[RMDB]
This 177-nucleotide RNA was probed chemically with 2A3. The data come from the RNA Mapping Database (RMDB), library RFM100. For 2A3 the reverse transcriptase was SuperScript II with manganese. Reactivities are given for positions 27 through 126. Conditions: 150 mM KOAc, 10 mM MgCl2 and 150 mM bicine (pH 8.5), 24 C.
RNA sequence: GGGAACGACUCGAGUAGAGUCGAAAACAUGAUUCAAAUCAUCUUGUGCUGCAGCAGUUUCUUUGUAAUAUGCUUCAUAUAUUUCACGGUUUUUAAUUCUGAAUGCACCAGAUAAAUCAAUAACAUGCUGAUGUUCGAGGUUCGCCUCGAACAUCAGAAAAGAAACAACAACAACAAC
Reactivity to 2A3 in 0.01 (KOAc 150mM, MgCl2 10mM, bicine 150mM(pH8.5), 24C), signal-to-noise 2, nucleotides 027 to 126: c080a020u050g020a040u220u080c030a000a070a120u120c000a000u040c010u000u020g000u010g050c000u010g000c000a040g000c020a040g000u080u030u000c040u090u060u090g000u010a000a040u010a000u030g060c090u150u010c100a020u040a000u020a000u070u010u010c040a000c000g030g000u040u020u000u030u120a090a080u080u050c000u000g140a090a070u080g040c000a000c010c000a000g000a000u000a030a100a010u090c090a000a040u150a090a050c060a080u100g010